[RMDB]
RNA sequence: GGGAACGACUCGAGUAGAGUCGAAAACUGCAUGUGGAAAUAUCUGCUCCUCAUUUCGUUAGGAGCAGGAAGACAUCCAUAACAUGCUACAUUAAUAAAGGAGUUCUCAGGGCUACCAACCUUACAGCCAAUUAGCUUUGUUCGCAAAGCUAAUUGGAAAAGAAACAACAACAACAAC
Reactivity to 2A3 in 0.01 (KOAc 150mM, MgCl2 10mM, bicine 150mM(pH8.5), 24C), signal-to-noise 1, nucleotides 027 to 126: c070u040g000c010a010u020g030u030g010g030a100a000a000u130a070u020c000u000g010c000u000c000c010u000c020a110u100u300u210c110g090u100u140a000g000g000a000g000c000a000g020g020a010a010g060a020c060a050u000c010c000a020u070a150a040c010a000u000g000c010u080a020c020a120u130u300a130a140u100a200a160a020g040g030a070g030u060u040c040u040c040a040g050g000g000c010u050a100c050c030a020a040c020c040u020u060a060c050a030g010
Reactivity to DMS in 0.01 (KOAc 150mM, MgCl2 10mM, bicine 150mM(pH8.5), 24C), signal-to-noise 2, nucleotides 027 to 126: c090u000g020c040a010u010g030u020g000g010a020a230a120u010a070u010c000u000g000c000u010c000c000u030c070a150u000u010u020c280g010u010u030a010g030g010a030g030c010a010g000g010a040a120g010a130c250a070u000c010c020a130u010a300a160c030a020u000g000c010u010a060c100a070u000u010a050a090u020a060a090a080g010g010a130g010u010u000c020u010c040a070g010g000g010c060u000a050c120c110a080a130c030c040u000u000a060c220a080g030